Overview
Conditions: 150 mM KOAc, 10 mM MgCl2 and 150 mM bicine (pH 8.5), 24 C. The record gives the reactivity of an RNA of 177 nucleotides to 2A3 and DMS. It was measured as part of the RMDB library OK2TST. For 2A3 the reverse transcriptase was SuperScript II with manganese. Values cover nucleotides 27 to 126.
RNA sequence: GGGAACGACUCGAGUAGAGUCGAAAAGGCGCCACGGCGGGAGGUGUCAGGCGGACUAUCGGGACUCGCCAUACCUGAAGACGGGGUGUAGUACAGAUCCUCGUACUCAUCGCGCGGAACCUCCCGCUACCAACAUAGACUUCGGUCUAUGUUGGUAAAAAGAAACAACAACAACAAC
Reactivity to 2A3 in 0.01 (KOAc 150mM, MgCl2 10mM, bicine 150mM(pH8.5), 24C), signal-to-noise 2, nucleotides 027 to 126: g010g000c030g050c030c020a020c020g070g000c030g020g010g000a010g000g010u060g070u120c050a040g010g070c010g040g000a050c050u050a140u140c020g060g000g010a050c010u010c020g010c000c000a020u070a070c010c000u030g030a070a000g060a030c020g030g000g000g000u020g070u140a120g070u060a040c060a040g090a140u130c020c020u040c080g000u040a100c000u020c020a080u040c020g060c000g020c010g080g020a010a000c000c000u010c000c010c000g000c000
Reactivity to DMS in 0.01 (KOAc 150mM, MgCl2 10mM, bicine 150mM(pH8.5), 24C), signal-to-noise 4, nucleotides 027 to 126: g010g010c050g010c080c040a140c190g000g020c000g010g000g010a020g000g010u000g000u010c040a040g020g000c050g010g000a110c130u010a100u000c110g000g000g010a070c070u000c100g010c020c020a190u000a060c000c010u000g010a030a100g010a230c010g000g000g000g010u000g010u020a060g020u010a060c210a130g000a110u000c070c050u000c050g010u000a030c030u000c060a090u000c000g000c000g000c020g000g000a180a030c010c010u010c000c000c000g020c010